[RMDB]
RNA sequence: GGGAACGACUCGAGUAGAGUCGAAAACAAGGGUAGUUCGCUACCCUUGAAAUUCUAGUCGCUAGAAAACGAUCAAAACUAGCGACUAGAAUAACGAUCGAAAAACUCAAUUCUUCGGAAUUGAGAAGUUCAUCAGUUAGUUCGCUAACUGAUGAACAAAAGAAACAACAACAACAAC
Reactivity to DMS in 0.01 (KOAc 150mM, MgCl2 10mM, bicine 150mM(pH8.5), 24C), signal-to-noise 2, nucleotides 027 to 126: c060a020a000g000g000g000u000a000g000u010u010c220g020c010u000a020c000c000c000u000u010g000a030a080a060u010u000c000u000a000g000u000c000g040c000u010a010g010a110a070a130a140c150g010a080u010c200a010a070a120a060c010u000a010g000c000g000a030c000u000a010g010a010a000u000a030a060c140g000a100u020c090g000a080a030a060a120a200c030u020c000a000a000u000u000c000u000u000c170g010g000a000a010u000u000g000a010g000a000a010
Reactivity to 2A3 in 0.01 (KOAc 150mM, MgCl2 10mM, bicine 150mM(pH8.5), 24C), signal-to-noise 2, nucleotides 027 to 126: c000a000a000g000g010g010u010a000g010u030u040c120g020c070u010a000c000c000c010u000u000g010a020a000a000u000u000c000u000a000g000u010c010g020c010u010a010g050a090a230a040a040c120g100a180u210c120a040a060a060a140c000u010a000g000c030g000a000c000u010a000g000a000a000u000a000a000c010g040a050u230c080g060a090a050a030a050a080c000u000c000a000a000u020u000c010u030u090c250g110g010a000a000u010u000g000a040g000a000a000
This 177-nucleotide RNA was probed chemically with DMS and 2A3. For 2A3, 2,320 sequencing reads were counted. It was measured as part of the RMDB library M2PK50. The reactions ran in a buffer of 150 mM KOAc, 10 mM MgCl2 and 150 mM bicine (pH 8.5), at 24 C.